[RMDB]
RNA sequence: GGGAACGACUCGAGUAGAGUCGAAAAGAAAAGUCAGCUAUGACGAAUAGCUAAGCGGCUAACACGCGAAGUUAGCGAAAAACUAGGAAAGGCGAUCUGAGCCGAACAGAUCAAACUAGGAAAGAAAGGGUAACAAUAUCUUCGGAUAUUGUUACCCAAAAGAAACAACAACAACAAC
Reactivity to 2A3 in 0.01 (KOAc 150mM, MgCl2 10mM, bicine 150mM(pH8.5), 24C), signal-to-noise 2, nucleotides 027 to 126: g060a000a080a000a000g240u210c130a000g010c000u000a040u100g000a030c170g000a070a030u000a000g000c040u050a090a000g030c000g010g000c040u000a010a000c300a080c080g130c070g000a060a020g010u000u000a000g040c000g010a030a140a140a000a000c020u000a010g000g100a230a110a000g170g000c040g010a000u020c000u030g030a060g040c020c030g040a000a000c000a000g000a000u000c000a000a000a050c040u030a020g080g110a190a020a000g140a030a160a020
Reactivity to DMS in 0.01 (KOAc 150mM, MgCl2 10mM, bicine 150mM(pH8.5), 24C), signal-to-noise 2, nucleotides 027 to 126: g000a170a100a100a140g000u000c240a040g000c050u000a000u010g000a110c180g000a210a000u000a030g010c060u000a200a150g020c000g000g000c000u010a000a000c030a080c010g030c050g050a180a070g000u000u010a010g020c100g110a050a100a010a120a030c000u000a000g000g000a010a110a070g000g020c220g000a000u000c020u000g000a170g000c000c150g010a030a180c030a010g010a040u000c000a080a120a100c020u000a020g050g000a060a100a070g020a070a180a050
Chemical mapping of a 177-nucleotide RNA with 2A3 and DMS. High DMS reactivity at an A or C suggests that its Watson-Crick edge is free. Source: RMDB library OK1LIB, as collected in RNAgym. DMS adducts were read by reverse transcription with MarathonRT.